[RMDB]
RNA sequence: GGGAACGACUCGAGUAGAGUCGAAAAUUGUGGUCAAGACCUUGGCGUAGUAUCCAAGGUUGUCAAGGUUCCUAUUGACUUAACAAUGAUUGACUUUAUGUUAUGGUGUAAGGAUGGACAGGGGAAAGUCAUUGGCAUGCUUCGGCAUGCCAAUGACAAAAGAAACAACAACAACAAC
Reactivity to DMS in 0.01 (KOAc 150mM, MgCl2 10mM, bicine 150mM(pH8.5), 24C), signal-to-noise 1, nucleotides 027 to 126: u000u010g010u010g000g010u020c010a040a070g000a010c000c010u000u000g010g000c190g010u000a250g020u030a130u020c080c030a050a040g010g000u000u000g000u000c110a050a080g030g000u000u000c050c070u020a160u000u000g000a020c030u010u030a230a010c000a040a040u010g010a300u010u010g000a020c000u000u000u000a030u020g000u030u020a110u000g000g010u010g000u010a070a030g000g030a060u040g020g020a060c030a110g000g000g000g000a140a050a050